[RMDB]
RNA sequence: GGGAACGACUCGAGUAGAGUCGAAAACUCCUCUUUCGAGAGGAGAAAAAAGGGGUCUUCACAUCCGAUGAGAUCUGAACUACAACUGAAGCCUCCACGGUUGCAGAUCGAGGUUGUGAAGACGGAGGCACCCAAAAAAGCGUCUUUCGAGACGCAAACAUGCUUGAUAGUUCGCUAUCAAGCAUGUAAAAGAAACAACAACAACAAC
Reactivity to 2A3 in 0.01 (KOAc 150mM, MgCl2 10mM, bicine 150mM(pH8.5), 24C), signal-to-noise 3, nucleotides 027 to 156: c000u000c000c000u000c010u040u070u260c290g100a000g010a000g020g010a010g000a080a070a080a000a000a000g160g020g020g000u010c010u000u000c000a010c000a000u000c010c020g210a300u170g090a050g000a040u010c000u010g030a110a090c090u140a090c190a010a000c010u020g010a060a010g000c000c000u000c000c010a030c010g010g000u000u020g000c000a000g000a000u010c010g040a060g000g010u020u010g000u000g010a000a000g000a000c000g000g000a000g000g000c010a030c000c000c010a080a070a000a010a000a000g000c000g010u000c020u020u170u200c260g090a020g000a020c000g000c010a020a020
Reactivity to DMS in 0.01 (KOAc 150mM, MgCl2 10mM, bicine 150mM(pH8.5), 24C), signal-to-noise 1, nucleotides 027 to 156: c000u000c000c000u000c000u000u010u000c250g010a030g000a030g020g030a080g010a000a000a090a100a060a040g080g030g000g020u010c040u000u000c010a040c000a030u020c020c010g030a220u030g020a290g030a030u000c020u000g010a140a180c070u010a270c010a010a000c030u000g000a060a130g000c020c010u000c000c010a300c060g010g000u010u000g000c000a010g010a030u010c010g030a150g030g010u000u010g000u000g000a000a030g020a010c030g000g010a060g050g030c000a110c010c010c020a000a030a180a080a110a080g010c010g000u000c000u010u000u030c300g000a010g010a010c000g050c000a010a080
The record gives the reactivity of an RNA of 207 nucleotides to 2A3 and DMS. DMS adducts were read by reverse transcription with MarathonRT. For DMS, 2,104 sequencing reads were counted.